Conditions: 150 mM KOAc, 10 mM MgCl2 and 150 mM bicine (pH 8.5), 24 C. The record gives the reactivity of an RNA of 207 nucleotides to 2A3. It was measured as part of the RMDB library RNAMAK. For 2A3, 1,362 sequencing reads were counted. 2A3 adducts were read by reverse transcription with SuperScript II with manganese.
RNA sequence: GGGAACGACUCGAGUAGAGUCGAAAAGGGGUCAGCUUGGAUUUACCUAAACGAAGUGCUCCAACAGCUUACCUGAAGCCUCCACGGGUAAGACAUGGAGCAUUAAUAUUAGGUUGUCAGCUGACGGAGGCACCCAAAAGCAAGCUUCGGCUUGCAACCUUUGACCUAGGUUCGCCUAGGUCAAAGGAAAAGAAACAACAACAACAAC
Reactivity to 2A3 in 0.01 (KOAc 150mM, MgCl2 10mM, bicine 150mM(pH8.5), 24C), signal-to-noise 2, nucleotides 027 to 156: g060g010g040g000u020c010a020g040c020u130u220g180g020a040u170u160u250a090c000c010u050a060a120a030c080g070a120a030g030u000g000c000u000c000c000a050a040c040a090g030c000u010u010a010c000c000u010g050a160a020g040c000c000u070c000c000a030c000g000g000g000u030a000a000g020a010c040a100u070g000g000a000g000c000a000u000u020a010a010u080a130u100u030a020g000g010u010u020g010u000c010a010g020c000u010g000a010c020g010g000a000g000g050c000a030c010c000c000a030a130a030a050g010c000a000a000g010c000u070u300c280g130g000c010u030u040g000c000a000a030